[RMDB]
RNA sequence: GGGAACGACUCGAGUAGAGUCGAAAAGGGCGUAGCAGCAGAGGGGCAUCGCAUUGACCGCGCGGGUUGGUCUGUGCGUUACACUCGCUGGUGUUGCCCCAUCACCACCGCUAAGAAGCCUUGACGACGGCAUCGCGGCAUUCGUGCCGCGAUGCCGAAAAGAAACAACAACAACAAC
Reactivity to 2A3 in 0.01 (KOAc 150mM, MgCl2 10mM, bicine 150mM(pH8.5), 24C), signal-to-noise 1, nucleotides 027 to 126: g040g010g050c050g190u080a030g000c010a000g090c030a030g030a090g030g040g000g000c000a060u010c000g020c000a000u040u020g040a020c000c000g000c000g000c080g150g300g010u260u160g030g000u060c000u000g050u000g020c000g020u090u040a000c160a010c000u020c000g000c050u050g010g000u000g000u000u080g000c000c080c000c000a040u070c010a000c000c000a070c040c010g060c010u050a100a000g020a040a000g090c010c000u100u160g000a080c140g000a000